[RMDB]
Structure probing data (2A3 and DMS) for a 177-nucleotide construct. The RNA was probed in 150 mM KOAc, 10 mM MgCl2 and 150 mM bicine (pH 8.5) at 24 C.
RNA sequence: GGGAACGACUCGAGUAGAGUCGAAAACCGUAACCGAUAUCGAACGCGUCGGCCUAUCUGCUAGACAGCUCAGCGGAAUUCUGAUGCUAGUCCGACGACUUCAUUAGUUACGGGAAGUGAUAAUCCAACUGAGGAGCACGUUCGCGUGUUCCUCAGUAAAAGAAACAACAACAACAAC
Reactivity to 2A3 in 0.01 (KOAc 150mM, MgCl2 10mM, bicine 150mM(pH8.5), 24C), signal-to-noise 5, nucleotides 027 to 126: c000c000g000u000a000a010c000c020g060a020u020a000u130c100g000a020a020c080g000c000g010u000c000g000g000c010c000u020a030u020c030u050g030c030u030a020g030a050c050a030g010c010u000c030a010g000c010g060g090a050a080u090u000c020u010g030a030u080g000c010u010a010g000u000c000c000g000a000c000g070a080c010u020u000c000a000u010u010a010g000u000u000a000c000g000g010g010a010a030g060u060g020a060u040a090a050u030c000c010a010
Reactivity to DMS in 0.01 (KOAc 150mM, MgCl2 10mM, bicine 150mM(pH8.5), 24C), signal-to-noise 5, nucleotides 027 to 126: c000c000g000u000a000a010c010c060g000a060u020a060u040c160g010a000a020c300g020c010g000u000c010g000g000c090c020u010a040u020c080u020g010c060u020a080g010a110c200a110g000c090u020c060a030g010c110g010g020a110a090u040u040c040u000g000a070u010g020c060u000a000g000u000c000c010g010a020c000g000a080c040u000u000c000a020u000u010a060g000u000u000a000c010g000g010g000a080a100g010u020g000a120u030a070a070u020c000c030a120